Chemical mapping of a 207-nucleotide RNA with 2A3 and DMS. For DMS the reverse transcriptase was MarathonRT. Conditions: 150 mM KOAc, 10 mM MgCl2 and 150 mM bicine (pH 8.5), 24 C. The 2A3 profile rests on 5,497 reads. Reactivities are rounded to 0.1 and cut off at 0 and 3. Source: RMDB library M2RFPK, as collected in RNAgym.
[RMDB]
RNA sequence: GGGAACGACUCGAGUAGAGUCGAAAAACAGAAUGGUGAAAGUUCAAGCAAGCUAGCCGGCAAAAAAGCAAACUUGACCACCAAGGAUAAAAGAGAUCUUAUCCAAGGAUGCAAAAGAUAAUCUCACAAAAGCUUCAUUCGUUCGCGAAUGAAGCAACAGGUGAAUAAAGUUCGCUUUAUUCACCUGAAAAGAAACAACAACAACAAC
Reactivity to 2A3 in 0.01 (KOAc 150mM, MgCl2 10mM, bicine 150mM(pH8.5), 24C), signal-to-noise 6, nucleotides 027 to 156: a000c040a020g150a120a110u060g000g020u030g040a270a070a030g030u120u050c020a020a000g010c010a080a020g000c010u050a030g020c000c060g070g010c090a060a060a060a050a030a000g020c020a040a030a030c010u020u030g010a020c030c000a000c000c000a020a050g030g000a030u050a060a070a040a000g060a010g000a010u010c010u060u030a000u000c030c010a020a030g060g020a040u130g050c040a050a060a040a020g010a010u100a090a070u080c030u010c060a060c050a030a150a040a020g000c000u000u000c000a000u000u000c010g020u020u070c150g000c000g130a000a000u000g000a000a000g000c000a000a000
Reactivity to DMS in 0.01 (KOAc 150mM, MgCl2 10mM, bicine 150mM(pH8.5), 24C), signal-to-noise 2, nucleotides 027 to 156: a060c030a140g010a140a100u000g050g020u000g010a100a070a090g010u000u000c020a040a110g020c080a050a250g010c060u000a300g020c040c000g000g040c000a010a040a050a090a100a050g020c010a040a120a020c010u000u010g000a090c070c010a080c020c010a050a300g010g000a080u000a000a050a060a090g020a130g020a100u020c040u000u000a030u000c000c000a040a280g010g010a150u000g010c030a040a120a100a110g030a090u000a070a040u010c020u010c000a070c060a030a020a130a170g020c000u000u000c010a030u010u000c010g020u000u000c300g040c030g010a020a010u000g010a000a010g020c010a010a030